[RMDB]
RNA sequence: GGGAACGACUCGAGUAGAGUCGAAAAGAUAUGGAACGUGACGGUUGGAGAUGUAUAUCGGAAACGAUAUACGGAAUUAACGCGUCCGUUCCUAAGUCAAACUGUGGGUCCUUCGGGACCCACAGAAGGUUAUAACAGGGUUCGCCCUGUUAUAACCAAAAGAAACAACAACAACAAC
Reactivity to DMS in 0.01 (KOAc 150mM, MgCl2 10mM, bicine 150mM(pH8.5), 24C), signal-to-noise 2, nucleotides 027 to 126: g010a030u000a190u000g010g000a010a010c010g010u010g050a020c000g010g020u000u000g040g000a080g000a300u020g020u010a000u000a010u000c010g000g000a090a060a120c010g000a010u000a000u000a010c000g000g000a160a100u000u000a070a090c060g000c010g000u000c000c000g000u000u000c000c000u000a010a090g030u000c020a110a100a250c000u000g010u000g010g010g030u000c060c000u000u000c280g020g030g000a030c000c000c000a010c000a010g000a020a090
Reactivity to 2A3 in 0.01 (KOAc 150mM, MgCl2 10mM, bicine 150mM(pH8.5), 24C), signal-to-noise 2, nucleotides 027 to 126: g010a000u030a020u090g010g010a020a010c050g070u300g030a010c030g120g240u220u200g230g140a260g000a110u030g020u020a020u010a000u010c010g000g000a040a020a020c020g000a000u000a000u000a010c030g000g030a020a050u260u110a240a050c040g000c000g300u000c000c000g010u010u000c010c000u000a010a000g020u000c020a050a060a130c010u000g000u010g000g020g000u000c000c000u020u060c180g070g000g020a010c000c000c020a000c000a000g000a010a020
Structure probing data (DMS and 2A3) for a 177-nucleotide construct. The reactions ran in a buffer of 150 mM KOAc, 10 mM MgCl2 and 150 mM bicine (pH 8.5), at 24 C. For DMS, 2,672 sequencing reads were counted.